[RMDB]
RNA sequence: GGGAACGACUCGAGUAGAGUCGAAAAGAUAUGGACUGUACUUGACAUGUGGGUACAUCGGAAACGAUGUACACCACAACAGCAAGACAGUCCUAAGUCAAAAGACUUGUCGUUCGCGACAAGUCAACGUUAUGUGCAACUUCGGUUGCACAUAACGAAAAGAAACAACAACAACAAC
Reactivity to DMS in 0.01 (KOAc 150mM, MgCl2 10mM, bicine 150mM(pH8.5), 24C), signal-to-noise 3, nucleotides 027 to 126: g010a000u000a050u010g010g010a000c000u000g020u000a150c000u010u000g020a020c060a300u020g030u010g000g010g020u010a010c000a000u010c010g010g000a010a010a020c010g000a000u000g000u010a000c010a110c020c000a010c000a090a020c230a120g060c000a010a000g000a040c010a000g000u000c000c000u000a000a060g000u010c010a120a100a150a130g000a030c000u000u000g000u000c000g020u000u010c300g030c040g020a000c000a010a000g020u000c000a010a070
Reactivity to 2A3 in 0.01 (KOAc 150mM, MgCl2 10mM, bicine 150mM(pH8.5), 24C), signal-to-noise 3, nucleotides 027 to 126: g040a010u030a010u040g000g000a010c000u010g000u210a300c000u080u030g020a050c070a300u300g000u010g010g000g040u000a000c000a010u010c000g000g020a020a020a000c010g000a000u000g000u000a000c000a030c000c010a010c000a030a000c010a000g000c000a020a010g010a010c000a000g000u000c000c000u010a000a000g000u000c000a070a050a000a120g000a010c000u000u010g000u000c030g050u030u170c300g010c020g110a000c000a020a000g000u000c010a010a020
Source: RMDB library TTRDES, as collected in RNAgym.
This 177-nucleotide RNA was probed chemically with DMS and 2A3.
As a SHAPE reagent, 2A3 marks flexible, mostly unpaired nucleotides at the ribose 2'-OH.
2A3 adducts were read by reverse transcription with SuperScript II with manganese.
The reactions ran in a buffer of 150 mM KOAc, 10 mM MgCl2 and 150 mM bicine (pH 8.5), at 24 C.
Reactivities are given for positions 27 through 126.